[RMDB]
RNA sequence: GGGAACGACUCGAGUAGAGUCGAAAAGACGACGCCGUCCGCGUUCAUUUGCAAAAAGUAGUGGUUCAAAAAUAUGUGCACGUGAUUCUGCGUGCCGAUUCUGAACGGAGCGUCGCUCAUAUUGCCGAUCGGCACCGCCGUCGUCAUCGCCGCCAUGGUAGGAAUCAGAGUUCGCUCUGAUUCCUACAAAAGAAACAACAACAACAAC
Reactivity to 2A3 in 0.01 (KOAc 150mM, MgCl2 10mM, bicine 150mM(pH8.5), 24C), signal-to-noise 3, nucleotides 027 to 156: g010a000c000g010a020c010g000c000c010g130u100c030c020g050c060g020u020u080c070a110u060u040u170g050c060a060a030a050a040a060g080u140a110g040u090g140g050u030u060c030a030a000a090a100a040u160a060u180g080u150g020c010a000c010g000u000g060a300u230u120c100u250g000c010g010u000g000c000c000g000a020u090u000c030u070g020a050a070c060g030g020a050g020c040g170u100c100g020c020u020c000a140u130a160u080u100g020c050c030g010a100u090c020g040g000c060a060c050c040g020c030c000g030u020c000g010u000c010a020u050c070g060c040c010g000c040c020a070u140g060